Structure probing data (2A3 and DMS) for a 177-nucleotide construct. The RNA was probed in 150 mM KOAc, 10 mM MgCl2 and 150 mM bicine (pH 8.5) at 24 C.
RNA sequence: GGGAACGACUCGAGUAGAGUCGAAAAUUGGAUAUCAACGUCAGUCAGCUAACUGAGAGGCUGAAGGGGAUGUUCAUCCGCCAGAUUGGGGUCCUCCUGGGGGUGCUGGAUUCCGACAUCAUUGUGCCGAGAAGGGAUAGUUCGCUAUCCCUUCUCGAAAAGAAACAACAACAACAAC
Reactivity to 2A3 in 0.01 (KOAc 150mM, MgCl2 10mM, bicine 150mM(pH8.5), 24C), signal-to-noise 1, nucleotides 027 to 126: u060u030g000g020a020u020a000u100c010a000a050c030g100u000c000a030g040u030c010a030g010c060u070a140a140c070u120g180a050g030a060g210g000c000u000g010a020a050g020g000g020g010a020u020g040u020u030c010a040u030c020c020g000c050c010a060g020a060u100u100g040g000g000g010u040c000c010u030c020c040u060g070g010g000g020g000u040g000c050u030g020g020a020u080u040c020c020g010a040c030a010u070c000a020u050u130g040u060g100c000
Reactivity to DMS in 0.01 (KOAc 150mM, MgCl2 10mM, bicine 150mM(pH8.5), 24C), signal-to-noise 3, nucleotides 027 to 126: u010u000g000g000a050u000a040u000c040a030a050c050g010u000c020a080g010u000c010a060g010c040u000a130a180c200u010g000a110g000a130g010g000c010u000g000a100a060g020g000g010g000a030u000g000u000u000c060a050u000c050c040g000c050c050a050g010a160u010u000g000g000g010g020u000c050c040u010c040c020u000g000g010g000g000g010u000g000c050u000g010g000a130u000u010c030c020g000a070c130a060u010c090a100u000u010g020u000g020c110
About this RNA: For DMS the reverse transcriptase was MarathonRT.